[RMDB]
Record summary:
Structure probing data (2A3) for a 207-nucleotide construct. The reactions ran in a buffer of 150 mM KOAc, 10 mM MgCl2 and 150 mM bicine (pH 8.5), at 24 C. Reactivities are given for positions 27 through 156.
RNA sequence: GGGAACGACUCGAGUAGAGUCGAAAACAAGUAGGACCAAUGGAAACUGUACUCACCCCACCUGUUGAAAACCUGGAGUUUGAGUAGGUCUUGCCUUGUGUAAGAAGGAGUGGAGAAGAAAAAAAUCACACCCUACAUUUGGUCAGGGCCAAACAAGACAGUUACACACGUUCGCGUGUGUAACUGUAAAAGAAACAACAACAACAAC
Reactivity to 2A3 in 0.01 (KOAc 150mM, MgCl2 10mM, bicine 150mM(pH8.5), 24C), signal-to-noise 1, nucleotides 027 to 156: c070a010a050g070u060a070g100g030a110c020c060a120a040u100g060g030a200a040a050c040u070g030u080a100c000u010c110a050c000c040c000c030a030c000c060u010g120u010u090g060a040a100a010a010c010c010u030g110g000a110g060u010u080u000g100a060g000u130a060g000g000u000c000u010u000g000c000c000u000u060g000u010g010u000a030a090g080a090a040g150g030a080g030u040g000g150a160g050a050a030g110a080a090a000a030a000a000a050u060c010a020c000a000c000c000c000u030a050c040a040u070u070u000g060g060u130c070a090g010g020g000c040c040a000a050a120c070a000a060g200